Record summary
This 177-nucleotide RNA was probed chemically with DMS and 2A3. The DMS profile rests on 4,164 reads. It was measured as part of the RMDB library TTRINS. For 2A3 the reverse transcriptase was SuperScript II with manganese. The RNA was probed in 150 mM KOAc, 10 mM MgCl2 and 150 mM bicine (pH 8.5) at 24 C.
[RMDB]
RNA sequence: GGGAACGACUCGAGUAGAGUCGAAAAGAUAUGGACAUGGGACUUCUUGGAUUUAUGGGAGGUCCAUUUGUAGUCGGAAACGACUACAAAUGGUCUCCCAUUGUCAGAAGGACCAUGUCCUAAGUCAUCUUAGAGAUAUCUUCGGAUAUCUCUAAGAAAAAGAAACAACAACAACAAC
Reactivity to DMS in 0.01 (KOAc 150mM, MgCl2 10mM, bicine 150mM(pH8.5), 24C), signal-to-noise 2, nucleotides 027 to 126: g000a060u010a300u010g000g020a010c000a010u000g010g000g000a170c000u000u010c010u000u000g030g020a030u010u010u000a010u000g000g010g010a010g020g000u010c000c000a000u000u000u000g000u010a010g010u010c000g000g010a160a160a260c010g010a020c000u000a000c000a000a000a000u000g010g000u010c000u000c000c000c010a000u000u000g010u000c000a020g010a020a000g010g000a130c000c000a000u000g010u000c000c000u000a000a070g000u000c030a170
Reactivity to 2A3 in 0.01 (KOAc 150mM, MgCl2 10mM, bicine 150mM(pH8.5), 24C), signal-to-noise 2, nucleotides 027 to 126: g040a020u110a060u190g000g000a000c010a000u000g010g040g040a030c010u010u020c020u100u240g300g050a090u300u300u060a020u150g010g010g010a020g010g090u080c030c000a000u020u000u010g010u020a000g010u010c000g000g000a040a080a040c020g000a010c010u000a000c020a000a000a010u000g010g000u000c010u000c000c000c000a000u000u010g000u000c010a000g000a010a000g000g010a000c000c000a000u000g000u010c010c000u000a010a000g000u000c010a020